[RMDB]
Notes:
Source: RMDB libraries RFM100 and RFMREP, as collected in RNAgym. The record gives the reactivity of an RNA of 177 nucleotides to DMS and 2A3. The 2A3 profile rests on 578 reads. 2A3 adducts were read by reverse transcription with SuperScript II with manganese. Reactivities are given for positions 27 through 126.
RNA sequence: GGGAACGACUCGAGUAGAGUCGAAAACACUCAAAACAAGGCCGGUUCGGUUGAUUCGUCCAUGAGGACGAGGAUAAGGGUAGAACGUCUUACUAGCACUAGGACGAUAAUGACCCGAAAGGCAACCUGGGCCAAUUAGAUUCGUCUAAUUGGCCCAAAAAGAAACAACAACAACAAC
Reactivity to DMS in 0.01 (KOAc 150mM, MgCl2 10mM, bicine 150mM(pH8.5), 24C), signal-to-noise 3, nucleotides 027 to 126: c140a090c060u020c010a100a040a080a090c260a100a140g010g030c050c040g030g010u030u020c100g020g010u000u000g000a200u020u010c010g000u000c010c000a260u000g020a180g020g000a000c010g000a000g000g010a090u020a100a100g000g000g000u000a070g000a180a160c010g020u000c000u040u000a000c030u000a180g000c180a200c300u000a030g020g000a010c000g010a040u020a090a120u090g000a060c020c040c010g000a030a060a080g000g000c000a100a020c050c040
Reactivity to 2A3 in 0.01 (KOAc 150mM, MgCl2 10mM, bicine 150mM(pH8.5), 24C), signal-to-noise 2, nucleotides 027 to 126: c050a010c020u210c080a080a120a140a080c000a000a050g170g010c000c000g000g070u130u200c070g040g010u000u010g040a080u090u000c000g000u010c010c020a090u230g110a090g130g030a000c000g000a000g000g000a100u110a080a090g030g000g010u080a080g010a200a060c000g000u000c000u040u020a000c010u010a000g000c000a020c020u000a000g050g000a000c000g020a020u090a050a130u150g020a000c000c000c000g000a020a130a000g080g040c010a000a000c000c030